RNA sequence: GGGAACGACUCGAGUAGAGUCGAAAAAAUAUGCUGUCUGGUGUUGGGGCAUUCGCCAUUGAAAAUGGUUUGAUUGCAGCGACUUCGCCAGUUACUCGCGUACGUAUCCGCAACGUCAAUACGGGUAGACGUCUUCUCAAUUCGUUGAGAAGACGUCAAAAGAAACAACAACAACAAC
Reactivity to 2A3 in 0.01 (KOAc 150mM, MgCl2 10mM, bicine 150mM(pH8.5), 24C), signal-to-noise 1, nucleotides 027 to 126: a000a000u180a040u070g000c000u030g000u060c010u040g000g000u060g020u080u030g010g080g030g000c000a000u000u040c010g000c010c030a000u080u140g240a180a130a060a040u050g000g050u080u110u300g050a040u040u020g010c000a090g070c050g060a060c000u020u010c000g040c020c020a000g000u030u090a090c040u050c080g000c010g010u060a060c010g100u030a050u000c000c000g000c080a080a100c000g070u050c070a040a020u110a070c040g090g010g000u040a080
Reactivity to DMS in 0.01 (KOAc 150mM, MgCl2 10mM, bicine 150mM(pH8.5), 24C), signal-to-noise 1, nucleotides 027 to 126: a070a080u000a030u000g000c030u000g000u000c000u000g020g030u000g030u000u000g000g000g020g000c000a030u000u020c030g000c000c000a020u000u000g000a160a100a080a070u000g010g010u000u000u040g020a000u000u000g020c030a150g020c060g000a090c000u010u010c060g000c050c000a040g010u010u000a040c010u000c200g020c020g030u000a050c000g000u000a110u000c030c030g020c030a040a010c030g010u000c160a060a090u020a040c000g000g000g040u000a110